[RMDB]
RNA sequence: GGGAACGACUCGAGUAGAGUCGAAAAGGGGUCAGUAUCGCUCUUGGAUUUAACAAGCUUUUGACGGUCUGAAGCCUCCACGGACCGAUAAGCUUGUUUGUCAGAGCGGUACUGACGGAGGCACCCAAACCAUAACCGGGUUCGCCCGGUUAUGGAACCACGAAUACUCCUUCGGGAGUAUUCGUGGAAAAGAAACAACAACAACAAC
Reactivity to 2A3 in 0.01 (KOAc 150mM, MgCl2 10mM, bicine 150mM(pH8.5), 24C), signal-to-noise 1, nucleotides 027 to 156: g090g000g050g020u040c040a000g000u020a000u000c010g040c040u090c040u110u230g160g020a110u220u300u200a000a000c000a000a020g000c030u070u100u200u210g180a190c100g000g010u000c000u020g080a160a060g030c000c000u020c000c040a040c020g010g010a000c000c010g040a060u020a140a000g000c010u010u000g000u020u010u110g010u070c050a050g000a010g040c000g000g000u000a000c000u000g000a000c010g000g000a000g030g010c000a050c000c000c000a130a080a000c000c000a000u000a000a000c040c000g000g080g030u040u100c280g090c010c000c040g000g010u000u000a000u000g000g000a010a000
Chemical mapping of a 207-nucleotide RNA with 2A3. The reactions ran in a buffer of 150 mM KOAc, 10 mM MgCl2 and 150 mM bicine (pH 8.5), at 24 C. Values cover nucleotides 27 to 156.